[RMDB]
RNA sequence: GGGAACGACUCGAGUAGAGUCGAAAAAGGAACGGGGGUGAUGCCUCUUGGUUAUAGAAGGUUUUACUCCUAGAAAGGAAUAGCCGUGUCUGUGUAUGAAGCACUGACGUUUGCGGUGGUAUUUGCCGUACUAUCCACUCUUCGGAGUGGAUAGUACAAAAGAAACAACAACAACAAC
Reactivity to DMS in 0.01 (KOAc 150mM, MgCl2 10mM, bicine 150mM(pH8.5), 24C), signal-to-noise 4, nucleotides 027 to 126: a060g000g000a110a100c180g000g000g000g000g020u000g010a020u000g010c010c000u010c020u000u000g020g030u040u060a110u020a020g000a090a050g010g010u010u010u000u000a010c010u000c000c010u000a090g010a060a060a060g000g000a050a020u010a150g000c000c000g000u000g010u010c000u000g000u010g010u010a110u030g030a170a170g000c010a020c010u000g000a030c030g010u020u040u030g020c040g000g000u010g000g020u000a030u000u010u000g010c140c050
Reactivity to 2A3 in 0.01 (KOAc 150mM, MgCl2 10mM, bicine 150mM(pH8.5), 24C), signal-to-noise 6, nucleotides 027 to 126: a000g090g010a050a010c080g000g000g000g010g010u010g020a030u020g000c020c000u000c020u030u040g250g000u200u070a150u030a150g130a140a070g020g000u010u060u000u000a020c020u000c000c000u000a050g140a040a050a010g050g050a070a070u060a040g030c000c020g140u170g020u110c050u050g020u020g020u010a080u300g190a170a020g040c000a010c020u040g010a010c020g070u050u140u270g020c000g010g000u040g030g000u050a060u030u040u080g030c040c040